[RMDB]
RNA sequence: GGGAACGACUCGAGUAGAGUCGAAAACUACCGUUUUUUGUUGCUCAAACAUUGGUAGAGCACACUUUCCAAUUGGAAUGGACGCAUUUGAAUAAAACGUGUGAAGGCGUUUCUACAAACAACGAUAAUCAGGCGUAGUAUUCGUACUACGCCUGAUAAAAGAAACAACAACAACAAC
Reactivity to DMS in 0.01 (KOAc 150mM, MgCl2 10mM, bicine 150mM(pH8.5), 24C), signal-to-noise 2, nucleotides 027 to 126: c020u020a110c130c030g000u000u000u000u000u010u000g030u000u010g000c130u030c080a150a060a080c120a210u010u010g010g060u010a080g000a070g000c020a020c150a070c070u000u000u020c000c060a280a140u080u010g000g020a070a030u000g010g000a100c110g010c000a030u000u000u040g020a110a070u030a080a070a040a040c090g010u000g000u000g000a080a080g000g060c080g010u010u000u000c000u030a050c140a120a030a150c150a050a040c120g000a100u000a180
Reactivity to 2A3 in 0.01 (KOAc 150mM, MgCl2 10mM, bicine 150mM(pH8.5), 24C), signal-to-noise 3, nucleotides 027 to 126: c010u020a040c000c030g000u000u000u000u000u090u100g100u060u080g000c050u120c040a070a140a130c140a150u060u300g120g000u080a010g000a010g020c030a000c000a000c020u010u060u020c020c000a200a300u070u210g040g060a030a060u000g000g030a050c040g020c060a070u020u030u150g100a120a060u120a210a070a010a020c070g030u080g000u040g150a090a060g070g000c020g000u000u000u030c010u140a130c110a050a120a000c040a170a010c090g180a080u070a050